[RMDB]
Structure probing data (DMS and 2A3) for a 177-nucleotide construct. Conditions: 150 mM KOAc, 10 mM MgCl2 and 150 mM bicine (pH 8.5), 24 C. It was measured as part of the RMDB library TTRDEL. DMS adducts were read by reverse transcription with MarathonRT. For 2A3 the reverse transcriptase was SuperScript II with manganese. Values cover nucleotides 27 to 126.
RNA sequence: GGGAACGACUCGAGUAGAGUCGAAAAGAUAUGGACCUGACUACCCACCGUGAUGAGGCUUUCGGAAACGAAAGCUACCCACCGCACGAGGUCAGGUCCUAAGUCAAAAGUGUGCUUCGGCACACAAGUUACACCUCUUGUUCGCAAGAGGUGUAACAAAAGAAACAACAACAACAAC
Reactivity to DMS in 0.01 (KOAc 150mM, MgCl2 10mM, bicine 150mM(pH8.5), 24C), signal-to-noise 3, nucleotides 027 to 126: g020a050u020a110u010g010g000a010c000c000u000g000a030c010u000a100c040c040c110a300c070c040g010u000g000a090u000g000a220g020g010c000u000u000u000c010g000g000a030a060a110c000g000a000a000a000g000c010u000a010c090c080c090a300c050c060g010c000a010c020g020a060g000g000u000c000a020g010g000u000c000c000u010a020a020g010u010c070a060a060a100a090g010u000g010u010g000c000u000u010c220g000g000c000a020c000a000c000a000a040
Reactivity to 2A3 in 0.01 (KOAc 150mM, MgCl2 10mM, bicine 150mM(pH8.5), 24C), signal-to-noise 1, nucleotides 027 to 126: g050a040u110a090u170g000g000a000c000c010u000g000a000c000u160a180c070c070c080a040c020c010g010u020g000a290u100g040a040g060g000c000u000u010u010c000g000g010a020a020a030c000g000a000a010a010g030c000u000a000c030c010c030a150c060c220g050c010a000c020g040a020g010g000u000c000a020g000g000u000c000c000u000a010a010g020u030c060a000a000a080a190g000u020g000u010g010c010u080u150c240g090g020c000a000c000a000c000a000a000